Record summary: The record gives the reactivity of an RNA of 177 nucleotides to 2A3 and DMS. For DMS, 6,223 sequencing reads were counted. It was measured as part of the RMDB library RFMREP. 2A3 adducts were read by reverse transcription with SuperScript II with manganese.
RNA sequence: GGGAACGACUCGAGUAGAGUCGAAAAUUAUUGCAACCUUCUAAUAACUUUACAUCUUCUUAUCCAAAGAAGAAGGGUUAGAAUGUACCGUGUUUUACGGAAGUUCCAUUCCCGUAGGGUUACAAUGCAUACUUUGGUUGUUCGCAACCAAAGUAUGAAAAGAAACAACAACAACAAC
Reactivity to 2A3 in 0.01 (KOAc 150mM, MgCl2 10mM, bicine 150mM(pH8.5), 24C), signal-to-noise 5, nucleotides 027 to 126: u040u010a020u010u070g020c000a020a040c010c000u060u040c050u090a120a120u070a100a090c030u070u080u130a050c020a080u010c000u040u000c000u010u040a070u120c070c040a110a050a010g010a010a000g020a030a030g020g000g010u010u030a010g000a030a020u040g030u110a060c010c000g000u010g080u080u190u120u280a000c000g010g000a010a000g000u010u010c040c030a050u120u070c020c010c000g030u050a040g020g000g010u010u000a010c020a030a030u050g030
Reactivity to DMS in 0.01 (KOAc 150mM, MgCl2 10mM, bicine 150mM(pH8.5), 24C), signal-to-noise 6, nucleotides 027 to 126: u010u020a010u000u010g010c020a020a040c010c010u000u010c110u010a070a100u000a050a080c120u000u000u010a120c220a150u000c000u000u000c000u000u000a070u020c160c180a080a050a010g000a010a010g000a040a180g010g000g010u010u000a050g000a030a010u000g000u000a280c000c010g010u000g010u000u010u010u000a020c010g010g020a060a300g000u000u000c020c090a100u000u000c000c020c000g010u010a040g010g000g000u000u000a020c020a030a010u000g010